Chemical mapping of a 177-nucleotide RNA with DMS and 2A3. The reactions ran in a buffer of 150 mM KOAc, 10 mM MgCl2 and 150 mM bicine (pH 8.5), at 24 C. The data come from the RNA Mapping Database (RMDB), library TTRDEL.
RNA sequence: GGGAACGACUCGAGUAGAGUCGAAAAGAUAUGGACAGUAGACAUGAAGUUAGGUCGGAAACGACCUUUCUUCAACAGCUACGUCCUAAGUCAAACGCAACUAUGGAGUUCGCUCCAUAGUUGCGAAGGAUAAGCGAUAGUUCGCUAUCGCUUAUCCAAAAGAAACAACAACAACAAC
Reactivity to DMS in 0.01 (KOAc 150mM, MgCl2 10mM, bicine 150mM(pH8.5), 24C), signal-to-noise 3, nucleotides 027 to 126: g020a040u000a300u020g000g000a000c010a100g030u000a000g000a070c060a180u000g000a020a010g010u000u000a000g030g030u010c000g020g000a060a070a160c000g010a010c000c000u000u010u000c010u000u000c010a020a090c300a180g000c000u010a000c010g010u000c000c000u000a030a080g000u000c020a110a130a250c030g000c000a000a010c000u000a010u000g000g000a020g010u000u000c250g010c000u000c000c000a000u000a000g000u000u000g010c000g010a000a020
Reactivity to 2A3 in 0.01 (KOAc 150mM, MgCl2 10mM, bicine 150mM(pH8.5), 24C), signal-to-noise 3, nucleotides 027 to 126: g020a020u070a030u100g030g000a020c130a160g030u000a000g030a080c070a200u100g010a000a000g000u000u000a000g000g010u000c010g010g000a030a070a010c000g010a000c000c000u000u000u000c010u000u010c010a030a000c040a020g030c000u000a010c010g000u000c010c000u030a110a030g070u030c060a150a030a050c030g000c000a010a000c000u000a000u010g010g000a010g010u090u150c240g150c170u000c000c000a000u000a010g000u010u000g010c000g000a000a000